[RMDB]
RNA sequence: GGGAACGACUCGAGUAGAGUCGAAAACCCCUUCAGCGAACAGAGAGCGCUGCGAGCGAGGAGUAAGACCAUAGCGAUGGAAAGAGAUGCUAGGAGUAGGGAGAGACCGAAGCGAGGAGGAAAGCAAGUAGAGUGGAGUUCGCUCCACUCAAAAGAAACAACAACAACAAC
Reactivity to DMS in 0.01 (KOAc 150mM, MgCl2 10mM, bicine 150mM(pH8.5), 24C), signal-to-noise 6, nucleotides 027 to 129: c020c010c010c100u040u050c030a030g040c000g000a030a040c030a140g030a130g010a100g060c080g000c050u040g000c030g000a100g000c080g030a080g030g000a060g050u060a020a070g020a110c060c040a100u040a080g030c020g020a100u040g000g000a070a060a040g010a020g020a080u010g040c070u000a100g040g010a000g000u040a080g000g000g000a000g000a100g000a060c060c040g000a120a030g000c060g030a010g050g020a030g020g030a040a020a040g030c130a040a060g010u070a060
Reactivity to 2A3 in 0.01 (KOAc 150mM, MgCl2 10mM, bicine 150mM(pH8.5), 24C), signal-to-noise 9, nucleotides 027 to 129: c000c000c000c000u040u100c030a030g010c010g030a040a030c040a050g070a000g020a010g140c030g020c080u060g030c050g030a030g010c030g010a030g000g000a010g020u090a080a010g030a040c010c030a070u090a040g050c070g050a040u110g040g010a040a050a020g050a020g010a030u110g030c030u050a030g000g020a040g020u070a070g040g010g000a010g000a010g010a020c010c020g020a030a010g020c030g000a010g000g000a010g010g010a030a010a010g040c060a050a010g060u110a030